This 177-nucleotide RNA was probed chemically with 2A3 and DMS. The reactions ran in a buffer of 150 mM KOAc, 10 mM MgCl2 and 150 mM bicine (pH 8.5), at 24 C. For DMS the reverse transcriptase was MarathonRT.
[RMDB]
RNA sequence: GGGAACGACUCGAGUAGAGUCGAAAAACGUCCGGAGGAUGUACGCAUCCUCCGGACGACGUAUCAUUGUGCCUUAUCCGCAAAAGGCGGGUAGGGCGAUAAGUCCGAAAGAGGGAUGAUAUGACAAUUACGAAUUCUUAUUCGUAAGAAUUCGUAAAAAAGAAACAACAACAACAAC
Reactivity to 2A3 in 0.01 (KOAc 150mM, MgCl2 10mM, bicine 150mM(pH8.5), 24C), signal-to-noise 8, nucleotides 027 to 126: a000c010g000u000c000c000g010g000a000g000g000a000u010g020u070a020c260g010c080a000u010c000c010u000c000c000g000g010a000c000g000a000c000g020u010a010u020c020a020u020u090g100u120g060c000c000u000u000a000u000c000c000g000c040a100a170a160a120g300g000c000g000g000g010u000a000g000g000g030c000g000a000u000a000a030g040u010c030c010g120a160a140a030g150a120g030g050g010a000u020g010a010u010a020u050g070a050c120a100a070
Reactivity to DMS in 0.01 (KOAc 150mM, MgCl2 10mM, bicine 150mM(pH8.5), 24C), signal-to-noise 6, nucleotides 027 to 126: a120c040g030u000c000c000g010g000a030g010g020a010u010g020u000a090c250g020c010a010u000c000c010u000c000c020g000g000a000c010g020a030c030g010u010a020u000c010a040u000u010g020u020g020c010c000u010u000a010u000c000c000g010c010a160a090a130a180g030g020c010g010g000g010u000a000g000g000g010c000g000a020u010a040a120g000u010c020c010g010a060a100a140g010a120g000g000g010a020u000g000a030u000a010u000g000a140c220a080a150